[RMDB]
RNA sequence: GGGAACGACUCGAGUAGAGUCGAAAAAAUUACAGCCGUUGAAACAGAGAAUGGUCGAAUUGAGUGUAACGAGGUUGUCGUCGCCACUAACAUUUGGGCUCGUCAACUUGGUGAGAAACUUGAUGUUCAUAUACCAGUCACACCAGUCGAACAUCAGAUCAGAAUACUAGUUCGCUAGUAUUCUGAUAAAAGAAACAACAACAACAAC
Reactivity to 2A3 in 0.01 (KOAc 150mM, MgCl2 10mM, bicine 150mM(pH8.5), 24C), signal-to-noise 6, nucleotides 027 to 156: a000a000u220u100a080c050a040g040c010c010g030u040u050g080a130a100a010c060a050g120a010g040a190a050u070g010g020u050c040g030a090a110u070u110g050a130g040u050g020u050a050a050c070g020a070g070g000u020u020g010u020c010g020u040c080g030c020c010a220c100u190a200a060c050a090u190u170u110g040g010g000c010u000c010g010u010c000a010a020c010u040u050g010g010u030g040a060g050a080a040a010c040u070u160g060a050u140g050u030u010c010a000u060a000u020a140c020c020a020g030u070c020a000c000a010c070c020a010g040u060c040g040a010a000c000a020u040c010a000g050
Reactivity to DMS in 0.01 (KOAc 150mM, MgCl2 10mM, bicine 150mM(pH8.5), 24C), signal-to-noise 4, nucleotides 027 to 156: a050a050u000u000a100c060a110g030c030c010g030u000u000g010a140a090a160c090a150g010a230g020a070a050u010g020g000u000c050g010a060a080u000u010g020a100g030u000g030u000a050a050c020g010a130g010g010u000u010g020u000c020g030u010c070g010c020c020a090c100u000a060a100c080a160u000u000u000g010g000g010c000u000c040g000u000c020a030a040c060u000u000g040g010u000g010a170g010a090a050a050c030u000u000g030a050u010g020u000u000c060a110u010a140u010a090c040c020a140g010u000c030a070c030a060c020c010a060g010u000c080g020a030a030c010a020u000c030a080g010
An RNA of 207 nucleotides, treated with 2A3 and DMS and read out base by base. 2A3 adducts were read by reverse transcription with SuperScript II with manganese. For DMS the reverse transcriptase was MarathonRT.